Chemical mapping of a 307-nucleotide RNA with 2A3 and DMS. DMS adducts were read by reverse transcription with MarathonRT.
RNA sequence: GGGAACGACUCGAGUAGAGUCGAAAAUUCUUUCAGGUCUGUGGUUGCGGAUUUUCCUAGUCCAAGGCAGAUGCGGUCAAAAGGAUCCACGUAAGUCACCAACGAAGCGCUGCUUUGCUGGGGCGAUCAUGGCGCAUCCUAGGGGUAAGUCGCACCGUCUGCGAAUGAGUUUUGCAACAUAGGGUUGCACGGGCGAGAGAACGAUGUCGUUUUGGCUUAGUUCCAGUGCGCGAGUGUGGGGGCAAAGACCAGGUCAGCUGAAAGAAAGGACUAGGUUCGCCUAGUCCAAAAGAAACAACAACAACAAC
Reactivity to 2A3 in 0.01 (KOAc 150mM, MgCl2 10mM, bicine 150mM(pH8.5), 24C), signal-to-noise 4, nucleotides 027 to 266: u010u000c000u010u010u000c010a000g000g060u070c020u020g010u020g010g020u030u030g000c020g020g090a130u150u120u170u220c000c000u010a000g010u010c060c080a180a300g020g000c000a010g000a020u020g010c000g000g000u010c010a010a020a010a020g010g000a000u020c000c000a020c010g020u020a020a010g010u010c020a040c300c000a020a000c010g020a010a010g010c300g090c300u300g010c030u060u000u010g000c000u000g000g010g000g000c020g000a000u020c000a010u020g020g000c000g000c020a010u010c010c050u070a090g040g040g040g000u010a000a010g020u010c000g000c010a010c010c000g000u000c000u020g040c060g110a140a170u260g050a210g170u230u240u140u070g000c010a010a020c020a040u300a150g280g180g020u000u000g000c010a010c010g000g000g020c000g000a010g000a010g000a020a000c010g060a080u050g030u020c060g100u060u090u300u300g000g000c000u030u070a000g000u010u000c000c000a020g010u000g000c010g000c000g010a000g010u080g010u020g000g010g000g000g010c000a000a000a030g000a010c000c000a000g000g000u000c000a010g000c000u000g000a000a000a000g000a010a010a000
Reactivity to DMS in 0.01 (KOAc 150mM, MgCl2 10mM, bicine 150mM(pH8.5), 24C), signal-to-noise 3, nucleotides 027 to 266: u010u010c000u000u010u000c010a040g000g000u020c000u000g010u000g000g020u000u000g000c070g000g000a120u010u000u010u000c010c000u010a070g010u010c030c020a080a150g020g010c010a040g020a020u000g010c020g000g010u000c020a050a040a070a070g010g000a020u000c020c030a030c020g010u000a050a100g000u010c010a110c000c010a020a030c020g000a020a020g010c010g030c280u020g000c010u000u000u000g000c040u000g000g000g000g000c010g000a030u010c030a090u010g010g010c080g000c050a010u000c040c180u020a080g000g020g040g010u000a020a030g010u000c000g010c010a030c020c020g000u010c010u000g000c110g010a110a110u010g010a160g010u010u010u010u000g010c020a010a020c010a230u020a120g020g020g020u000u000g020c000a040c030g000g000g010c000g000a100g000a200g000a020a000c010g000a050u000g000u010c000g040u010u010u030u010g010g010c000u000u000a150g000u000u000c010c020a120g000u010g010c000g010c030g000a100g010u010g000u000g000g000g000g000g000c050a020a210a030g000a030c010c010a000g000g000u000c000a020g000c000u000g000a010a030a030g000a020a060a120